Background:
Structure probing data (2A3) for a 177-nucleotide construct. Values cover nucleotides 27 to 126. For 2A3, 675 sequencing reads were counted.
[RMDB]
RNA sequence: GGGAACGACUCGAGUAGAGUCGAAAACAAAUUUUGUGCAGUGCAGCCAUGCAAGAACAGAGAGGAUGGCGUCUCACUUCCGAUUUAAGCUGUGGCUUCCGUGCCGGUCGAUACUCAAUCCCGGCUUAUCACUACCAGCGUUCGCGCUGGUAGUGAUAAAAGAAACAACAACAACAAC
Reactivity to 2A3 in 0.01 (KOAc 150mM, MgCl2 10mM, bicine 150mM(pH8.5), 24C), signal-to-noise 1, nucleotides 027 to 126: c020a010a080a010u080u080u180u150g120u130g030c040a040g000u000g020c000a000g000c000c020a040u090g030c040a120a050g090a220a050c080a160g120a000g030a000g220g000a020u070g060g000c020g040u040c000u070c040a010c020u030u000c000c010g010a100u000u190u140a070a030g000c040u010g010u060g110g010c000u100u070c050c000g080u050g000c000c000g000g020u020c010g010a000u010a140c050u070c220a050a050u010c040c030c000g060g000c000u010u040